[RMDB]
RNA sequence: GGGAACGACUCGAGUAGAGUCGAAAAGACGUGCCUGGUUUUGAGUGUGGGAGGAUGUCACGGACAAAUUUCGUGACCGUGUUAGGCCAGCAUCGAAGAGCGUACCUAGCUGCGUUUCAACCUGCGUGGGUUGGGGCGGCUUAGCGGAUUAAGGCGUGCCGCUUAGUAUGUUCGCAUACUAAGCGGCAAAAGAAACAACAACAACAAC
Reactivity to 2A3 in 0.01 (KOAc 150mM, MgCl2 10mM, bicine 150mM(pH8.5), 24C), signal-to-noise 1, nucleotides 027 to 156: g160a000c110g130u100g000c010c070u100g060g010u050u110u080u120g060a040g000u120g000u080g000g000g080a000g000g030a090u190g000u030c000a000c010g020g040a000c140a110a180a090u040u040u070c060g000u050g000a000c000c000g050u020g040u180u140a060g030g000c030c020a000g010c010a010u110c090g020a100a090g030a000g040c040g000u020a120c000c090u040a000g000c080u000g000c030g030u000u030u050c040a000a000c000c000u070g090c110g220u300g000g000g020u000u020g000g000g030g000c100g000g000c000u050u000a020g000c010g000g000a000u120u210a080a090g030g010c020g000u000
Structure probing data (2A3) for a 207-nucleotide construct. The data come from the RNA Mapping Database (RMDB), library VIROID. For 2A3, 558 sequencing reads were counted. The RNA was probed in 150 mM KOAc, 10 mM MgCl2 and 150 mM bicine (pH 8.5) at 24 C. Reactivities are given for positions 27 through 156. 2A3 adducts were read by reverse transcription with SuperScript II with manganese.